[RMDB]
RNA sequence: GGGAACGACUCGAGUAGAGUCGAAAAGCUGCCGUGGAGCUGUUCGAGGACCUCAUCUCGCACGUGCGACGCGAGCUCUCUGCCCGUCUCCUGAAGCUGCGGGUCGACCAGAUAGAGUUCAAGGUCAACUUACUCUCAGGUUCGCCUGAGAGUAAGUAAAAGAAACAACAACAACAAC
Reactivity to 2A3 in 0.01 (KOAc 150mM, MgCl2 10mM, bicine 150mM(pH8.5), 24C), signal-to-noise 3, nucleotides 027 to 126: g010c030u070g040c060c020g040u040g030g040a040g010c020u020g040u020u060c010g020a030g010g040a200c040c080u120c090a130u040c020u010c010g030c010a040c060g150u120g020c010g010a020c010g010c020g030a040g010c010u010c000u010c010u070g020c000c000c010g010u010c000u050c000c030u100g070a110a030g040c040u070g030c040g010g000g050u010c050g010a050c010c030a030g060a150u110a030g170a020g060u040u100c080a090a050g040g020u010c020a010
Reactivity to DMS in 0.01 (KOAc 150mM, MgCl2 10mM, bicine 150mM(pH8.5), 24C), signal-to-noise 4, nucleotides 027 to 126: g010c070u000g020c130c020g030u000g020g010a220g010c020u000g010u000u000c020g020a060g020g010a110c170c120u010c190a110u000c010u010c010g020c080a060c070g000u010g010c020g010a110c090g020c070g000a060g010c030u000c020u000c050u000g010c030c000c020g010u010c050u000c020c030u000g000a120a120g030c060u000g010c050g000g000g010u000c060g010a070c060c020a100g010a120u010a070g010a090g000u010u000c060a100a110g010g000u000c060a140